The record gives the reactivity of an RNA of 207 nucleotides to 2A3 and DMS.
For 2A3 the reverse transcriptase was SuperScript II with manganese.
Source: RMDB library OK3TST, as collected in RNAgym.
Conditions: 150 mM KOAc, 10 mM MgCl2 and 150 mM bicine (pH 8.5), 24 C.
For DMS, 7,913 sequencing reads were counted.
DMS adducts were read by reverse transcription with MarathonRT.
[RMDB]
RNA sequence: GGGAACGACUCGAGUAGAGUCGAAAAGCAUUGCAGGAGUAUCAAUUACGUCGUAACCCUGACACUUGACGGAGAGACCUAUUAACCAGUCCUUAUAAGCGUGACACUCCGGGAAAAUGGGUAUCGUACCCACUCCCAUAGCCUCAACGGGAGGGAGAGGCUAAAACAAAUUCGUUUGUUUUAGCCUAAAAGAAACAACAACAACAAC
Reactivity to 2A3 in 0.01 (KOAc 150mM, MgCl2 10mM, bicine 150mM(pH8.5), 24C), signal-to-noise 7, nucleotides 027 to 156: g030c040a050u070u190g010c040a020g020g030a050g030u080a070u160c070a090a130u190u100a090c090g040u050c020g040u070a130a160c000c000c020u020g030a030c020a010c100u080u140g030a050c020g030g000a030g000a010g020a070c000c020u060a090u160u060a100a030c040c010a020g050u050c010c000u110u150a100u030a230a040g040c050g060u050g030a010c010a010c100u030c030c000g000g000g030a060a140a050a070u050g010g030g000u050a090u200c060g010u040a050c010c010c000a030c010u000c000c000c000a020u060a050g070c010c000u060c030a070a060c070g010g000g010a030g010g000g000a060g000
Reactivity to DMS in 0.01 (KOAc 150mM, MgCl2 10mM, bicine 150mM(pH8.5), 24C), signal-to-noise 4, nucleotides 027 to 156: g020c030a090u010u000g020c070a050g020g030a070g010u000a070u000c040a090a120u010u000a080c110g010u000c050g040u010a080a140c020c020c010u000g030a140c080a060c050u000u010g010a120c040g010g010a130g020a100g000a110c010c040u000a080u000u010a050a070c060c040a160g000u010c050c050u000u000a110u000a040a060g010c050g030u010g020a090c040a060c040u000c020c030g040g010g030a060a060a050a060u010g030g010g020u000a060u020c130g020u010a100c010c010c000a050c030u010c010c000c010a110u000a120g000c040c030u010c050a120a100c070g000g010g000a110g000g000g000a070g000